[RMDB]
RNA sequence: GGGAACGACUCGAGUAGAGUCGAAAACGGUCGGCCGUGAACACUUCCGCCGCCUUGAGUAUAUGCGGCCUAUGGCGAUCCAGGGACCGAAUCAGCUUUCGCAUCACCGGCACCUCGUGCUUUGAGGAACCUAGGAUAUCUUCGGAUAUCCUAGGUUAAAAGAAACAACAACAACAAC
Reactivity to 2A3 in 0.01 (KOAc 150mM, MgCl2 10mM, bicine 150mM(pH8.5), 24C), signal-to-noise 3, nucleotides 027 to 126: c020g010g040u050c060g080g060c040c010g070u090g050a080a040c070a020c120u120u030c050c030g010c020c000g000c010c030u050u080g080a060g120u120a110u040a020u300g050c020g000g000c000c020u120a170u110g040g000c020g050a020u000c020c050a030g060g000g040a060c050c030g020a020a030u090c020a020g020c050u060u080u090c050g000c040a050u040c030a020c050c000g050g000c020a060c010c020u040c020g080u100g110c000u130u080u180g050a060g000g020
Reactivity to DMS in 0.01 (KOAc 150mM, MgCl2 10mM, bicine 150mM(pH8.5), 24C), signal-to-noise 5, nucleotides 027 to 126: c070g000g010u010c050g010g010c010c020g010u000g010a080a100c120a070c070u000u010c090c120g000c040c020g010c020c080u000u010g000a110g010u010a090u000a070u010g010c020g010g000c010c070u010a070u000g000g010c040g000a090u000c050c030a070g010g010g010a090c060c020g000a090a080u000c070a080g020c030u000u000u010c060g020c060a070u010c060a080c040c040g010g000c080a150c010c020u000c050g020u010g010c110u010u000u010g010a100g010g000
Chemical mapping of a 177-nucleotide RNA with 2A3 and DMS. For 2A3, 3,425 sequencing reads were counted. The data come from the RNA Mapping Database (RMDB), library OK2TRN. Values cover nucleotides 27 to 126. The reactions ran in a buffer of 150 mM KOAc, 10 mM MgCl2 and 150 mM bicine (pH 8.5), at 24 C.